[RMDB]
RNA sequence: GGGAACGACUCGAGUAGAGUCGAAAAUAGAUGUCGGUGGGUCAUUAUCGAAAAUGGCUUAAGGUAUAGUCGGACCACAUGGGAGACCAUGAUGUGGUGAAUAAGGAGAUACCAUCUCCCCGAGCGCCACGGUGCGCUCAGUCGAGCGGGCACGGGUCCAUAAAGGUAAGUUCGCUUACCUUUAUGGAAAAGAAACAACAACAACAAC
Reactivity to DMS in 0.01 (KOAc 150mM, MgCl2 10mM, bicine 150mM(pH8.5), 24C), signal-to-noise 2, nucleotides 027 to 156: u010a100g040a070u010g010u000c020g000g020u000g010g030g040u000c030a060u010u000a160u000c120g010a050a060a090a090u010g010g000c050u000u000a070a070g000g010u000a070u000a120g040u000c040g010g020a100c020c020a050c030a020u000g000g040g000a300g000a180c030c020a030u000g010a020u000g040u010g020g030u000g020a040a090u000a040a090g000g020a060g000a110u020a080c120c040a130u000c010u000c000c010c000c040g000a130g020c010g010c000c010a090c200g020g020u000g010c010g000c000u000c010a030g000u010c070g000a060g030c070g010g000g020c020a100c020g010g000g000u000
Reactivity to 2A3 in 0.01 (KOAc 150mM, MgCl2 10mM, bicine 150mM(pH8.5), 24C), signal-to-noise 4, nucleotides 027 to 156: u100a010g100a050u070g010u060c040g020g030u050g040g010g020u010c030a050u030u130a070u140c160g080a080a090a030a080u050g030g000c020u060u060a070a040g040g000u050a060u050a120g070u050c040g020g030a020c010c010a020c020a040u030g000g020g010a070g020a030c010c010a030u080g010a070u090g070u030g020g000u040g040a070a090u150a120a040g020g010a020g010a010u070a160c030c040a070u020c020u020c010c000c000c020g010a020g020c020g000c010c020a110c080g060g030u140g010c000g000c000u010c010a010g060u050c030g020a020g000c030g000g020g000c040a010c050g040g000g020u000

This 207-nucleotide RNA was probed chemically with DMS and 2A3. Source: RMDB library RSTRND, as collected in RNAgym. For DMS the reverse transcriptase was MarathonRT. Conditions: 150 mM KOAc, 10 mM MgCl2 and 150 mM bicine (pH 8.5), 24 C. 2A3 is a SHAPE reagent: it acylates the 2'-hydroxyl of flexible nucleotides of all four kinds. Reactivities are given for positions 27 through 156.